[RMDB]
RNA sequence: GGGAACGACUCGAGUAGAGUCGAAAAGAUAUGGAGAUAACAGACAUGACGAGUCGGAAACGAUAACGUCAACAGCUGUAUCUCCUAAGUCAAAAGCUCUCGUUAAUCUUCGGAUUAACGAGAGCAACCGAUCAUUACUCUUCGGAGUAAUGAUCGGAAAAGAAACAACAACAACAAC
Reactivity to 2A3 in 0.01 (KOAc 150mM, MgCl2 10mM, bicine 150mM(pH8.5), 24C), signal-to-noise 2, nucleotides 027 to 126: g040a000u050a050u080g020g010a010g000a030u040a230a130c020a010g260a140c110a190u150g010a010c030g010a010g050u050c010g030g020a000a030a010c010g000a010u140a300a120c020g030u010c060a060a060c110a200g020c010u010g000u000a000u000c010u000c020c000u000a010a030g010u030c020a040a040a050a070g000c000u000c000u030c000g010u010u000a010a020u000c020u050u080c300g130g020a000u020u000a000a020c000g000a000g030a000g000c010a000a000
Reactivity to DMS in 0.01 (KOAc 150mM, MgCl2 10mM, bicine 150mM(pH8.5), 24C), signal-to-noise 1, nucleotides 027 to 126: g000a010u000a260u000g000g000a010g020a030u000a050a030c010a040g000a100c160a120u010g000a000c030g010a300g000u000c000g030g010a010a100a000c000g000a030u000a070a120c010g010u000c000a040a100c300a090g010c040u000g000u000a030u000c010u000c000c000u000a000a100g000u000c040a100a060a160a090g000c000u000c000u000c000g000u000u000a000a000u000c000u000u000c300g020g010a000u000u000a000a000c000g000a000g000a000g000c020a000a000